[RMDB]
RNA sequence: GGGAACGACUCGAGUAGAGUCGAAAACACAACUGCGAAGGGGGGACGGAGAAGGCUAUGUUGGCCGGGCGACGGUUGUCCCGGUUUAAGCGUGUAGGCUGGUAUUCCAGGCAAAUCCGGAAUUGAAUGUCCACUCGUAAUUCGUUACGAGUGGACAAAAAGAAACAACAACAACAAC
Reactivity to DMS in 0.01 (KOAc 150mM, MgCl2 10mM, bicine 150mM(pH8.5), 24C), signal-to-noise 1, nucleotides 027 to 126: c020a130c120a060a110c050u000g010c010g010a120a100g000g010g010g010g010g000a080c060g030g000a070g020a080a070g020g010c010u000a120u000g030u020u000g010g000c030c020g000g000g060c300g030a100c160g000g010u000u010g000u000c000c000c010g020g000u000u000u010a020a040g010c050g010u010g010u010a100g010g000c000u010g000g000u030a100u000u000c010c030a060g010g000c100a060a140a100u000c010c000g000g000a180a050u010u010g010a090a060